[RMDB]
RNA sequence: GGGAACGACUCGAGUAGAGUCGAAAAUCCCAAAGGUUGCCGAAUCCGAAAGGUUAGGAGGAACCGCUUUUUGGGGUUAAUCUGCAGUGAAGCUGCAGUAGGGAUACCUUCUGUCCCGCACCCGACAGCUAACUCCGCAGGCAAUAAAGGAAGGAGAAGUACUACUAUCGUUCGCGAUAGUAGUACUAAAAGAAACAACAACAACAAC
Reactivity to DMS in 0.01 (KOAc 150mM, MgCl2 10mM, bicine 150mM(pH8.5), 24C), signal-to-noise 3, nucleotides 027 to 156: u000c000c110c020a050a110a140g010g010u010u010g000c000c020g000a130a220u010c010c020g020a160a150a180g010g020u000u020a100g010g000a100g020g010a090a080c090c070g010c090u000u000u000u000u000g020g010g020g020u000u010a070a110u010c010u010g040c010a040g040u000g010a160a230g030c000u010g000c010a050g020u010a010g000g010g010a080u000a060c040c070u000u000c020u000g000u000c110c000c000g000c100a090c030c020c000g000a070c130a040g010c010u010a180a230c020u000c010c010g040c080a160g000g010c040a040a050u010a050a120a070g020g000a060a030g030g020a200g000a170
Reactivity to 2A3 in 0.01 (KOAc 150mM, MgCl2 10mM, bicine 150mM(pH8.5), 24C), signal-to-noise 3, nucleotides 027 to 156: u010c000c020c010a050a070a000g090g010u020u030g000c020c000g040a040a080u050c010c010g090a130a030a010g040g010u060u060a030g000g010a000g010g010a060a090c080c030g010c020u120u150u030u050u130g020g000g000g000u030u030a060a020u020c000u000g000c000a000g010u080g290a150a030g130c010u000g000c010a000g000u000a040g000g000g000a010u090a110c010c000u020u000c030u040g000u000c020c000c010g010c000a030c000c010c010g030a100c060a030g000c020u030a030a020c000u010c010c010g000c040a010g020g000c000a010a000u050a010a040a010g010g000a000a010g000g030a060g050a130

Record summary
This 207-nucleotide RNA was probed chemically with DMS and 2A3. For DMS the reverse transcriptase was MarathonRT. It was measured as part of the RMDB library OK3TST. The RNA was probed in 150 mM KOAc, 10 mM MgCl2 and 150 mM bicine (pH 8.5) at 24 C.